[RMDB]
RNA sequence: GGGAACGACUCGAGUAGAGUCGAAAACGCUGCGAUAUACGUUAUAUUGAACCGGCAGACUCGGGUGGCGUACAGUCGAGCGCUAAGAUGAAACGAGAGGAAGUACGCCGAGUCGUGAAAAAAUGCGCGACUUUAUAGUUUUCGAACUAUAAAGUCGAAAAGAAACAACAACAACAAC
Reactivity to DMS in 0.01 (KOAc 150mM, MgCl2 10mM, bicine 150mM(pH8.5), 24C), signal-to-noise 7, nucleotides 027 to 126: c070g010c060u000g000c040g010a060u000a040u000a080c150g010u010u010a080u010a110u010u010g000a120a150c150c030g020g010c090a130g010a050c050u000c010g020g010g030u010g020g000c010g020u000a020c020a090g010u000c010g000a080g000c020g010c040u000a070a140g010a120u000g010a100a090a080c030g000a100g010a130g000g000a060a080g010u000a020c030g010c020c000g000a010g000u000c010g000u000g000a000a020a070a060a060a070u010g020c140g010
Reactivity to 2A3 in 0.01 (KOAc 150mM, MgCl2 10mM, bicine 150mM(pH8.5), 24C), signal-to-noise 5, nucleotides 027 to 126: c030g000c020u060g030c030g020a020u030a000u020a140c100g040u190u040a090u010a020u130u120g050a100a060c040c000g030g020c060a040g030a100c020u010c030g140g000g050u080g050g000c010g000u000a010c030a030g070u020c020g030a040g040c010g000c040u060a080a070g080a180u140g100a070a090a030c050g010a040g000a030g180g010a100a030g030u020a010c020g000c020c010g000a000g010u010c000g000u040g030a110a060a050a020a000a040u200g050c110g000
Source: RMDB library OK2TRN, as collected in RNAgym. An RNA of 177 nucleotides, treated with DMS and 2A3 and read out base by base. The reactions ran in a buffer of 150 mM KOAc, 10 mM MgCl2 and 150 mM bicine (pH 8.5), at 24 C. High DMS reactivity at an A or C suggests that its Watson-Crick edge is free.